[RMDB]
RNA sequence: GGGAACGACUCGAGUAGAGUCGAAAAUUAGAUGAGGCCAAAGAAUAAAAGUAAUAUAGAGGUCAAAAGAGGCAACUGGGAUCCAACUUAUCGAUGUUAUUCCAUGUGCUACCAUUUCAAUCAUGGAAGAGUUCUUCCCAGCACAGGUCCCAGACCAACCCAGUAUUUAGUUCGCUAAAUACUGGGUAAAAGAAACAACAACAACAAC
Reactivity to 2A3 in 0.01 (KOAc 150mM, MgCl2 10mM, bicine 150mM(pH8.5), 24C), signal-to-noise 2, nucleotides 027 to 156: u120u060a060g070a080u050g030a080g050g020c020c010a100a080a000g040a070a010u160a180a070a030a010g030u040a060a070u160a030u060a090g070a050g050g000u000c000a000a000a000a200g060a030g040g020c030a090a020c020u000g010g030g000a010u000c060c030a030a060c050u110u080a080u240c110g040a060u170g020u170u080a040u080u030c050c010a010u020g030u000g020c020u120a200c000c050a130u060u150u300c080a050a060u080c020a020u020g000g020a000a020g010a020g040u050u000c000u010u010c010c010c000a000g060c040a020c000a010g000g060u000c000c040c010a010g010a080c000c020a010
Reactivity to DMS in 0.01 (KOAc 150mM, MgCl2 10mM, bicine 150mM(pH8.5), 24C), signal-to-noise 2, nucleotides 027 to 156: u000u010a130g010a080u000g000a080g020g010c010c030a070a120a120g000a150a170u000a050a100a060a120g010u010a040a070u010a090u000a070g000a090g020g020u010c040a090a030a090a090g010a140g010g010c020a090a040c010u010g010g000g000a060u010c040c050a030a050c020u000u010a110u000c030g040a090u000g020u000u000a070u000u000c010c000a050u000g010u000g020c050u000a150c120c130a180u000u020u000c040a080a130u000c040a010u000g000g000a010a100g010a100g000u000u010c080u000u010c000c010c030a150g000c030a050c120a090g020g000u010c010c000c000a070g000a100c040c000a070

Chemical mapping of a 207-nucleotide RNA with 2A3 and DMS. The data come from the RNA Mapping Database (RMDB), library OK3TST. Conditions: 150 mM KOAc, 10 mM MgCl2 and 150 mM bicine (pH 8.5), 24 C. The 2A3 profile rests on 1,468 reads.